[RMDB]
RNA sequence: GGGAACGACUCGAGUAGAGUCGAAAAGAUAUGGAUAUACGAAGUCAUGUUCAGCGUUGAAAUCGGAAACGAUGGAGCUGACAUGCCGAGUAUAUCCUAAGUCAAAACUUGUAGUUCGCUACAAGAAUCCUAUCGUAUACUUCGGUAUACGAUAGGAAAAAGAAACAACAACAACAAC
Reactivity to 2A3 in 0.01 (KOAc 150mM, MgCl2 10mM, bicine 150mM(pH8.5), 24C), signal-to-noise 5, nucleotides 027 to 126: g030a010u070a030u140g000g000a000u000a000u000a000c020g100a130a010g050u070c020a000u000g060u150u150c010a000g010c010g290u300u050g050a020a030a000u010c010g010g010a050a050a050c010g000a010u020g000g040a010g000c000u010g010a000c000a000u000g000c000c000g010a030g000u000a000u000a000u000c000c000u000a050a000g030u010c020a020a010a140a190c010u000u010g010u000a020g030u040u100c300g020c160u000a010c000a010a000g010a020a090
Reactivity to DMS in 0.01 (KOAc 150mM, MgCl2 10mM, bicine 150mM(pH8.5), 24C), signal-to-noise 5, nucleotides 027 to 126: g010a040u000a300u010g010g010a020u000a000u000a000c000g000a200a150g010u000c000a000u000g000u000u000c000a000g020c000g020u010u030g010a080a090a010u000c000g000g000a120a100a170c000g010a010u000g000g000a090g030c010u000g000a010c000a000u000g000c010c000g000a300g000u000a000u000a000u000c000c000u000a020a080g000u000c030a120a080a100a110c010u000u000g000u000a000g010u010u020c260g020c010u000a010c010a000a000g010a160a150

An RNA of 177 nucleotides, treated with 2A3 and DMS and read out base by base. DMS adducts were read by reverse transcription with MarathonRT. DMS (dimethyl sulfate) methylates the pairing face of unpaired adenines and cytosines.